Background: The record gives the reactivity of an RNA of 177 nucleotides to DMS and 2A3.
RNA sequence: GGGAACGACUCGAGUAGAGUCGAAAAGCGUGCGUGUUCGCACGCACGCAAAGCGGCCAGCUCCAGGCGGCCAAACAAUAUGGAGCACAAAUGUCAGCAAAAAAAGAAUGGUGUUCGCACCAUUCAAGUAAUCUGGAUAGUUCGCUAUCCAGAUUACAAAAGAAACAACAACAACAAC
Reactivity to DMS in 0.01 (KOAc 150mM, MgCl2 10mM, bicine 150mM(pH8.5), 24C), signal-to-noise 3, nucleotides 027 to 126: g010c000g030u000g000c010g030u000g030u000u000c210g030c000a010c020g010c000a000c000g000c010a060a050a100g000c020g010g030c000c010a120g010c000u010c000c010a040g010g020c010g020g010c010c110a040a080a050c130a000a010u000a050u000g010g010a010g000c000a220c260a050a040a060u010g000u010c170a050g020c110a010a000a070a100a040a090a090g000a030a010u000g010g020u000g010u000u020c210g010c000a020c000c000a000u000u000c000a070a100
Reactivity to 2A3 in 0.01 (KOAc 150mM, MgCl2 10mM, bicine 150mM(pH8.5), 24C), signal-to-noise 3, nucleotides 027 to 126: g000c000g000u000g000c020g000u030g040u050u150c200g030c100a010c010g020c000a000c010g020c000a010a060a000g010c020g080g000c000c000a060g000c000u000c000c000a000g000g020c000g010g000c120c060a120a100a010c080a010a010u020a020u020g000g000a010g090c020a000c030a010a070a020u240g060u180c050a020g040c100a150a080a040a040a020a020a050g000a010a010u000g010g000u010g020u050u090c170g000c030a000c000c000a000u000u000c000a000a010
Values cover nucleotides 27 to 126. 2A3 adducts were read by reverse transcription with SuperScript II with manganese. For DMS, 2,587 sequencing reads were counted. For DMS the reverse transcriptase was MarathonRT. The RNA was probed in 150 mM KOAc, 10 mM MgCl2 and 150 mM bicine (pH 8.5) at 24 C.